[RMDB]
RNA sequence: GGGAACGACUCGAGUAGAGUCGAAAACCUAACGCAAGUUAUCCACCAUCCAAGCGUCGAAACUGUAUGAAAACAAGGUUUUAGUUUCACCACAUCACGUUCACCUUUUGCUUUACAUGUAUCGCGAACCAAGGUGUGUUUUCGAACACACCUUGGUAAAAGAAACAACAACAACAAC
Reactivity to DMS in 0.01 (KOAc 150mM, MgCl2 10mM, bicine 150mM(pH8.5), 24C), signal-to-noise 2, nucleotides 027 to 126: c010c000u010a030a120c060g000c060a060a030g000u000u010a090u000c050c000a070c010c040a080u000c030c110a070a110g020c020g030u010c050g000a070a090a050c070u010g030u020a060u000g020a060a060a060a060c160a060a050g000g000u030u000u000u010a100g000u000u000u000c010a020c030c030a020c080a030u000c070a040c040g020u010u010c030a060c030c000u000u020u000u000g040c080u010u000u000a070c090a060u000g000u010a030u000c090g000c140g030a100
Reactivity to 2A3 in 0.01 (KOAc 150mM, MgCl2 10mM, bicine 150mM(pH8.5), 24C), signal-to-noise 4, nucleotides 027 to 126: c000c010u020a040a000c030g000c050a010a060g020u050u040a070u100c020c000a040c010c010a030u040c000c030a040a040g020c020g030u040c030g060a040a030a020c020u060g060u120a060u190g090a030a010a030a060c080a040a050g010g060u000u000u010u130a040g030u010u040u050c010a020c030c000a020c000a040u060c030a000c040g040u120u080c020a150c020c000u060u030u060u080g040c010u070u060u060a070c040a080u100g040u130a110u090c020g010c000g110a020
The record gives the reactivity of an RNA of 177 nucleotides to DMS and 2A3. For DMS the reverse transcriptase was MarathonRT. 2A3 adducts were read by reverse transcription with SuperScript II with manganese. Conditions: 150 mM KOAc, 10 mM MgCl2 and 150 mM bicine (pH 8.5), 24 C.